[RMDB]
RNA sequence: GGGAACGACUCGAGUAGAGUCGAAAAACGAAAAGGAGAUAAGAUCACCCCAGGUUCUCUGGUGGAGAUAAAACGUACUGAUGUAGAAGGGAAUUGGGCUCUGACAGGAGGCAUGGAACUGACAAGAGACUGUGUUUCCGUUCGCGGAAACACAGUCAAAAGAAACAACAACAACAAC
Reactivity to DMS in 0.01 (KOAc 150mM, MgCl2 10mM, bicine 150mM(pH8.5), 24C), signal-to-noise 1, nucleotides 027 to 126: a030c190g000a110a110a180a130g040g020a160g000a060u000a040a240g000a060u000c040a000c040c000c000c000a010g010g070u000u010c080u000c000u000g000g040u000g050g000a110g010a020u000a040a000a010a110c040g030u020a120c050u000g000a060u000g030u020a010g000a100a080g040g000g000a190a040u040u000g000g000g000c000u010c180u050g000a180c070a150g010g000a120g010g010c010a010u000g040g000a050a110c260u000g030a130c150a010a070g010a190
Reactivity to 2A3 in 0.01 (KOAc 150mM, MgCl2 10mM, bicine 150mM(pH8.5), 24C), signal-to-noise 1, nucleotides 027 to 126: a000c050g010a100a050a000a060g180g070a090g020a040u090a080a060g000a060u000c110a030c000c000c000c000a020g000g100u300u090c170u060c000u050g030g000u110g150g000a070g000a000u290a030a160a000a000c020g000u070a040c070u040g010a030u020g020u100a090g020a130a030g060g130g000a020a020u090u060g000g110g000c010u000c000u000g060a080c000a000g000g120a000g000g110c000a000u150g080g000a140a000c000u070g040a080c040a090a010g010a000

An RNA of 177 nucleotides, treated with DMS and 2A3 and read out base by base. The RNA was probed in 150 mM KOAc, 10 mM MgCl2 and 150 mM bicine (pH 8.5) at 24 C. For 2A3 the reverse transcriptase was SuperScript II with manganese. For 2A3, 521 sequencing reads were counted.